[RMDB]
RNA sequence: GGGAACGACUCGAGUAGAGUCGAAAAUGAGCGAGGUGGACAGGGUGACUGAUGAGUCACUGGUGACCAUCAGUAACAUAAGCGGCCUGACUCGCCUCUGCCUCAAUGGCUGCAGGGCAAUCACCGAUGCUAUUCCAGGUUUCGACCUGGAAUAGCAAAAAGAAACAACAACAACAAC
Reactivity to DMS in 0.01 (KOAc 150mM, MgCl2 10mM, bicine 150mM(pH8.5), 24C), signal-to-noise 2, nucleotides 027 to 126: u010g030a040g020c040g000a040g000g010u000g000g010a090c010a070g010g000g020u000g000a060c000u000g000a040u000g000a160g000u010c000a040c120u000g040g000u000g010a010c000c000a030u010c010a010g010u010a080a060c080a070u010a080a080g010c090g020g000c010c000u000g010a090c130u010c050g020c030c000u000c020u000g010c110c030u000c100a060a080u010g000g000c020u000g000c110a090g010g040g020c060a070a100u000c100a060c030c030g040a130
Reactivity to 2A3 in 0.01 (KOAc 150mM, MgCl2 10mM, bicine 150mM(pH8.5), 24C), signal-to-noise 1, nucleotides 027 to 126: u100g000a010g000c020g020a000g000g030u050g020g000a010c020a030g050g040g130u040g080a020c000u020g020a020u000g100a060g040u000c030a040c140u120g220g110u040g010a020c010c010a010u010c010a000g000u040a060a000c020a100u100a100a010g060c060g070g080c000c000u030g020a070c000u010c050g000c000c000u020c020u020g060c020c000u040c020a020a120u060g030g000c010u030g050c070a080g000g010g080c040a000a030u060c030a020c080c010g050a040